[RMDB]
This 177-nucleotide RNA was probed chemically with DMS and 2A3. For 2A3, 2,497 sequencing reads were counted. For 2A3 the reverse transcriptase was SuperScript II with manganese. The reactions ran in a buffer of 150 mM KOAc, 10 mM MgCl2 and 150 mM bicine (pH 8.5), at 24 C.

RNA sequence: GGGAACGACUCGAGUAGAGUCGAAAAUAAUAUGCAUCGAUCGAUUAUACGUAUAAUGCGCUAGCAUAUAUCGGCAUUAUACGAUUACGCGCGUAUAUAAUAUCGGCCGGCGCCGGCAUCGGCUACGACUUAAGAGUGUCUUCGGACACUCUUAAGUAAAAGAAACAACAACAACAAC
Reactivity to DMS in 0.01 (KOAc 150mM, MgCl2 10mM, bicine 150mM(pH8.5), 24C), signal-to-noise 5, nucleotides 027 to 126: u000a090a070u000a040u010g000c040a080u000c050g010a070u010c030g010a130u000u000a090u010a140c040g010u000a020u000a010a010u000g010c000g020c100u000a060g020c230a080u010a070u000a040u000c070g000g010c030a020u000u000a010u000a010c000g000a150u000u000a060c090g020c110g000c120g030u000a020u000a030u000a110a100u010a080u000c060g000g000c010c000g010g010c060g020c020c060g000g000c080a060u000c030g010g000c030u010a070c170g000
Reactivity to 2A3 in 0.01 (KOAc 150mM, MgCl2 10mM, bicine 150mM(pH8.5), 24C), signal-to-noise 3, nucleotides 027 to 126: u070a000a050u080a020u080g000c040a060u070c050g100a050u040c020g040a030u100u120a060u110a180c000g010u020a000u010a010a020u020g010c070g010c110u060a030g040c100a080u140a030u030a040u300c060g100g010c010a000u030u010a020u030a010c020g030a000u000u060a020c010g020c000g000c000g060u020a020u020a000u010a100a150u050a070u100c040g000g040c010c010g030g000c030g030c020c050g000g030c030a050u080c010g020g000c010u080a060c060g060